[RMDB]
RNA sequence: GGGAACGACUCGAGUAGAGUCGAAAAAUUAGGGCCAAAUCGGCCACCACGCGAUCGGCCAGCACGGCCUGCUGCACUUCCGCUAGAGUGCGUUGAAAAUCGUCUAGGUCUACGAAGCGGUGGUAGGUACCGGUGUUGAUGGUGUACGUGCACGUGGCAGCAUAACAAUCUUCGGAUUGUUAUGCUGAAAAGAAACAACAACAACAAC
Reactivity to DMS in 0.01 (KOAc 150mM, MgCl2 10mM, bicine 150mM(pH8.5), 24C), signal-to-noise 2, nucleotides 027 to 156: a120u010u000a130g010g030g000c000c030a050a100a170u010c110g000g010c000c010a050c020c000a020c010g000c010g010a300u010c030g000g020c010c040a110g000c020a040c030g020g000c020c000u000g000c020u000g010c000a050c000u000u000c030c120g030c080u010a050g000a160g000u000g010c050g050u010u000g000a160a090a180a080u000c010g040u000c060u000a080g030g040u000c060u000a200c020g020a070a010g010c020g020g020u000g020g020u010a020g010g010u000a030c140c020g030g010u010g110u000u000g000a160u000g030g020u000g000u010a010c060g010u010g000c000a030c030g000u010g000g000
Reactivity to 2A3 in 0.01 (KOAc 150mM, MgCl2 10mM, bicine 150mM(pH8.5), 24C), signal-to-noise 3, nucleotides 027 to 156: a000u240u130a070g020g000g000c060c010a030a100a300u180c100g010g000c010c000a000c000c000a040c010g050c040g020a110u120c010g060g000c000c000a020g030c000a020c020g010g000c000c000u000g010c020u020g000c000a040c020u030u020c050c050g000c030u000a020g000a050g090u110g060c040g010u010u090g150a120a050a050a060u120c050g030u010c070u080a020g080g050u050c020u000a020c060g050a070a000g000c140g230g000u010g000g020u010a030g010g020u080a210c020c030g090g070u050g000u060u120g150a120u090g010g060u080g050u080a040c050g000u010g010c030a020c080g000u050g010g000